An RNA of 207 nucleotides, treated with 2A3 and read out base by base. 2A3 adducts were read by reverse transcription with SuperScript II with manganese. The data come from the RNA Mapping Database (RMDB), library OK3TST.
[RMDB]
RNA sequence: GGGAACGACUCGAGUAGAGUCGAAAAACGCGGUCGGCCACCAACUGAGAAAUGCCCUUUGCAUCCAAAGCGGCAUCUUUGAGUUUGUCCAACUCUGCCUCUUUCUUGGCCAAUUCGGCCUUGGCCUCUUCCUCGGCCUUGGCCUUAGCUGCUUCAGCGUUGCGAAGUGAUUCGUCACUUCGCAACGAAAAGAAACAACAACAACAAC
Reactivity to 2A3 in 0.01 (KOAc 150mM, MgCl2 10mM, bicine 150mM(pH8.5), 24C), signal-to-noise 1, nucleotides 027 to 156: a000c100g020c060g110g020u150c060g020g050c060c000a020c020c030a070a170c050u100g000a000g020a080a120a010u000g000c020c010c030u000u010u060g030c110a170u190c080c020a060a000a000g010c150g000g010c000a010u000c100u090u010u020g000a000g000u030u060u210g070u100c080c000a030a030c020u030c020u050g080c020c000u020c040u090u100u060c030u080u050g040g040c000c000a030a050u230u160c030g020g000c000c000u010u010g040g000c050c020u060c050u060u060c010c010u050c010g000g050c010c010u010u000g030g000c000c000u000u020a000g000c000u050g010c000u050u120c070a010g070